[RMDB]
RNA sequence: GGGAACGACUCGAGUAGAGUCGAAAAGGUUUCUCGCUGGGCGUUAAUACGCUAUGAUACAGGGAGAAGCCUGAAGCGCGCACGGGCUUCAUCGAUCUGUAUAUAGCGUUAACGCCUGUGCUGAAGCGCGCACGGCAACCGAAAGGUGCGAACCAAAGAUGAUAUACAACUUCGGUUGUAUAUCAUCAAAAGAAACAACAACAACAAC
Reactivity to DMS in 0.01 (KOAc 150mM, MgCl2 10mM, bicine 150mM(pH8.5), 24C), signal-to-noise 2, nucleotides 027 to 156: g030g000u000u000u000c010u000c010g030c060u010g010g020g000c000g070u000u010a050a130u020a080c010g030c010u000a030u000g000a140u010a040c010a030g030g010g010a050g030a020a040g000c000c010u000g010a010a050g030c030g050c000g000c030a300c010g030g010g020c000u000u000c000a220u000c150g030a060u000c000u010g000u010a040u000a040u000a020g000c000g040u000u000a020a040c010g050c000c010u010g000u010g000c050u000g030a050a070g030c000g030c010g000c000a300c080g010g010c030a070a090c020c070g020a150a160a090g020g010u000g040c020g000a090a260c040c040a030a110a270
Reactivity to 2A3 in 0.01 (KOAc 150mM, MgCl2 10mM, bicine 150mM(pH8.5), 24C), signal-to-noise 4, nucleotides 027 to 156: g080g000u010u020u000c020u000c010g010c010u010g010g000g010c010g010u010u010a050a030u200a240c020g000c000u000a000u020g230a010u020a010c010a000g010g000g000a040g000a000a000g000c000c000u000g010a100a040g000c000g010c000g000c000a000c000g000g000g000c000u000u010c020a060u300c020g010a000u000c000u000g000u030a040u010a000u010a010g000c000g000u000u000a000a000c000g000c010c000u000g000u000g000c000u020g010a110a060g000c000g000c000g000c000a010c010g010g000c000a000a000c010c000g040a070a040a020g020g000u010g010c010g010a040a020c030c020a030a030a050